[RMDB]
The record gives the reactivity of an RNA of 177 nucleotides to 2A3 and DMS.
It was measured as part of the RMDB library OK2TST.
High DMS reactivity at an A or C suggests that its Watson-Crick edge is free.
High 2A3 reactivity points to a flexible backbone, as in loops and unpaired stretches.

RNA sequence: GGGAACGACUCGAGUAGAGUCGAAAAUCAAGUGCAAAUAUGCUUGGAGAUAGGCAAUGUGCCAGCAGAUGACGCUUUCGCUAGCAUAGAGUCGUCAAUAGGAGGUGGAUUCCCAACUCCGCCAGAAAGUCACUCACUAGUUCGCUAGUGAGUGACUAAAAGAAACAACAACAACAAC
Reactivity to 2A3 in 0.01 (KOAc 150mM, MgCl2 10mM, bicine 150mM(pH8.5), 24C), signal-to-noise 2, nucleotides 027 to 126: u090c020a000a030g060u030g140c050a000a140a230u300a140u200g010c010u030u010g070g000a130g040a070u140a200g020g000c010a060a050u110g020u080g060c010c000a010g060c020a040g030a100u050g050a050c050g010c030u040u040u010c040g030c000u010a010g000c010a030u050a080g010a000g010u060c010g010u030c030a030a110u100a140g080g050a060g010g040u030g040g030a120u080u070c000c000c010a000a000c010u020c020c010g050c000c000a070g110a120a180
Reactivity to DMS in 0.01 (KOAc 150mM, MgCl2 10mM, bicine 150mM(pH8.5), 24C), signal-to-noise 2, nucleotides 027 to 126: u010c080a010a090g000u000g000c080a110a200a140u030a050u000g020c000u000u000g010g020a200g000a090u000a050g020g030c020a050a090u010g080u010g010c000c020a050g020c080a110g000a050u010g000a080c150g000c110u000u040u020c050g000c020u000a060g010c030a070u000a110g000a120g000u000c030g020u010c040a110a120u000a040g000g000a090g020g000u010g000g000a110u000u010c020c000c030a150a080c150u000c010c000g040c040c040a030g030a030a060